[RMDB]
Source: RMDB library OK3TST, as collected in RNAgym.
This 207-nucleotide RNA was probed chemically with 2A3 and DMS.
RNA sequence: GGGAACGACUCGAGUAGAGUCGAAAAUGAGUUUUGUUUUGUAAACAAGUUAUCUACAAUCAAAAUUGGUGAUUUUGGCAGAUGGAAUCACACUGCAUAAUAUGUCUACCCAUAUACACGUUCAUAUACACACAGGUAUAUCAUCACACAUACAUAAAUAAAAUUAGCGUUUCGACGCUAAUUUUAUAAAAGAAACAACAACAACAAC
Reactivity to 2A3 in 0.01 (KOAc 150mM, MgCl2 10mM, bicine 150mM(pH8.5), 24C), signal-to-noise 4, nucleotides 027 to 156: u100g000a030g040u000u020u010u030g050u030u080u030u030g050u060a060a090a070c090a100a080g040u100u090a070u040c040u050a030c020a050a020u050c010a030a000a030a050u050u050g060g020u020g040a060u010u060u110u130g070g000c000a010g050a120u050g030g080a100a060u130c020a040c020a010c070u020g000c020a030u040a150a020u040a100u070g040u020c030u020a050c000c040c010a010u020a010u020a070c050a010c040g020u080u100c060a040u070a010u080a180c060a010c010a010c030a090g100g000u010a020u010a010u060c020a020u090c010a010c020a010c020a050u110a070c030a020u180a150a200
Reactivity to DMS in 0.01 (KOAc 150mM, MgCl2 10mM, bicine 150mM(pH8.5), 24C), signal-to-noise 2, nucleotides 027 to 156: u010g050a060g040u000u010u000u010g000u000u000u000u000g030u000a000a130a160c060a060a300g020u000u000a170u010c040u000a030c000a050a030u000c010a050a010a040a030u010u000g050g040u020g000a080u000u000u000u000g010g070c020a100g000a110u010g000g000a090a110u010c030a040c040a140c060u000g010c070a090u010a090a060u000a110u010g010u010c020u000a050c010c040c040a090u010a100u000a050c020a030c060g010u010u010c060a060u020a090u000a070c020a160c090a100c120a080g080g000u000a050u010a040u010c020a070u010c030a070c060a040c040a030u000a070c040a030u010a060a040